[RMDB]
RNA sequence: GGGAACGACUCGAGUAGAGUCGAAAAGAUAUGGAUCUGUACUGAGUAGCGUAUUGUCAGGCUACAUGGAUCGGAAACGAUCCGGGUAGCCUUGGAUUUAUACGCGAAACGUACAGAUCCUAAGUCACCUAUUGUUGGAGUUCGCUCCAACAAUAGGAAAAGAAACAACAACAACAAC
Reactivity to DMS in 0.01 (KOAc 150mM, MgCl2 10mM, bicine 150mM(pH8.5), 24C), signal-to-noise 2, nucleotides 027 to 126: g010a060u000a300u010g010g000a000u010c010u000g030u000a010c010u000g020a070g030u000a180g000c010g020u000a040u000u010g000u000c020a050g000g000c010u000a000c000a120u010g000g030a000u000c010g010g000a120a100a240c010g020a010u000c000c000g030g000g020u000a000g010c000c030u000u000g000g000a020u010u010u000a030u000a000c000g010c000g000a060a100a210c300g010u000a000c000a010g020a010u000c000c000u000a000a100g000u010c060a230
Reactivity to 2A3 in 0.01 (KOAc 150mM, MgCl2 10mM, bicine 150mM(pH8.5), 24C), signal-to-noise 1, nucleotides 027 to 126: g020a020u070a030u280g000g000a000u000c000u000g000u010a010c010u000g000a000g020u020a010g010c000g000u000a020u000u050g030u040c020a020g010g000c000u010a010c010a080u020g000g010a000u000c010g010g010a090a120a030c040g000a000u000c000c020g020g000g000u000a000g000c110c000u000u070g020g010a010u170u300u140a040u000a000c020g000c000g000a010a010a000c000g000u000a000c000a000g000a000u000c000c010u010a010a000g000u030c020a000

Chemical mapping of a 177-nucleotide RNA with DMS and 2A3. It was measured as part of the RMDB library TTRINS. 2A3 adducts were read by reverse transcription with SuperScript II with manganese. DMS adducts were read by reverse transcription with MarathonRT.